[RMDB]
RNA sequence: GGGAACGACUCGAGUAGAGUCGAAAAGAACACCGCUGGCGAAGGCGGGUCCCUGGGAAACACCUGACGCCGAGGAACGAAAGCGGGCGUAGCAAACAGGAUUAGAUACCCUGGUGGUCCACGCCGAAAAUUAUUAGAAAUUCGUUUCUAAUAAUUUAAAAGAAACAACAACAACAAC
Reactivity to 2A3 in 0.01 (KOAc 150mM, MgCl2 10mM, bicine 150mM(pH8.5), 24C), signal-to-noise 6, nucleotides 027 to 126: g040a100a030c090a040c050c010g020c080u100g050g020c100g080a100a050g070g020c030g000g020g000u020c010c000c000u010g030g010g000a080a070a000c030a030c010c010u020g040a020c010g000c010c010g040a140g050g100a150a080c080g080a200a050a040g230c090g010g010g000c010g010u020a020g040c040a010a090a040c010a000g010g000a020u060u110a050g040a080u090a060c010c010c010u020g010g030u080g000g020u030c020c010a080c070g000c000c000g010a040
Reactivity to DMS in 0.01 (KOAc 150mM, MgCl2 10mM, bicine 150mM(pH8.5), 24C), signal-to-noise 8, nucleotides 027 to 126: g000a150a130c110a100c010c010g000c050u010g010g020c060g010a200a090g000g000c040g000g000g020u010c010c000c010u000g000g010g010a110a110a100c090a090c010c000u000g010a060c040g020c010c010g000a140g000g020a120a130c100g000a100a100a120g010c080g010g010g010c000g010u000a060g000c070a090a060a250c010a010g000g000a080u010u010a130g010a190u050a110c070c000c010u010g000g020u010g000g010u020c090c050a060c000g010c010c020g000a060